Chemical mapping of a 207-nucleotide RNA with 2A3 and DMS.
It was measured as part of the RMDB library M2RFPK.
DMS adducts were read by reverse transcription with MarathonRT.
The RNA was probed in 150 mM KOAc, 10 mM MgCl2 and 150 mM bicine (pH 8.5) at 24 C.
For 2A3 the reverse transcriptase was SuperScript II with manganese.
The 2A3 profile rests on 953 reads.

RNA sequence: GGGAACGACUCGAGUAGAGUCGAAAAGUUAGGUGAGGCGGCUACACGAACAGAGGCCACUGACCCCGAACGUCGAGAGACGCCCCGGGUCAGGACAGCUCUUCCCGGCUUAAGGGUUGAGCCCAGGUAUCACCCUGGCUAUUCGUAGCCAGGGUAACUUGAGUGUAAUGUUCGCAUUACACUCAAGAAAAGAAACAACAACAACAAC
Reactivity to 2A3 in 0.01 (KOAc 150mM, MgCl2 10mM, bicine 150mM(pH8.5), 24C), signal-to-noise 1, nucleotides 027 to 156: g040u040u070a040g040g020u040g020a030g010g080c050g030g000c050u080a040c110a000c110g050a050a020c060a060g030a040g160g010c030c030a060c010u000g010a010c030c000c000c000g010a030a020c000g000u010c000g000a050g000a000g000a100c000g000c000c030c000c000g000g030g000u000c000a000g010g010a030c030a020g000c010u000c010u030u000c010c000c010g000g010c070u030u120a080a100g020g000g000u000u020g000a000g000c000c010c020a060g040g070u160a120u280c050a030c000c010c000u000g000g000c010u000a040u080u060c300g030u030a000g000c010c000a000g100g000g000u000a000a010
Reactivity to DMS in 0.01 (KOAc 150mM, MgCl2 10mM, bicine 150mM(pH8.5), 24C), signal-to-noise 1, nucleotides 027 to 156: g000u010u000a080g020g020u010g010a070g040g040c100g010g010c030u010a100c060a120c000g000a090a130c100a200g000a060g020g030c020c000a170c020u000g010a000c030c000c020c030g010a030a020c030g000u000c020g010a300g000a300g000a060c000g010c020c010c050c220g030g000g020u000c010a030g000g010a100c080a070g040c000u000c020u000u020c020c020c040g020g000c160u000u000a100a120g000g010g000u000u010g010a090g070c000c020c040a200g000g050u000a060u000c080a060c000c010c000u000g010g000c000u000a020u010u000c280g060u000a000g000c010c010a050g030g020g030u000a000a010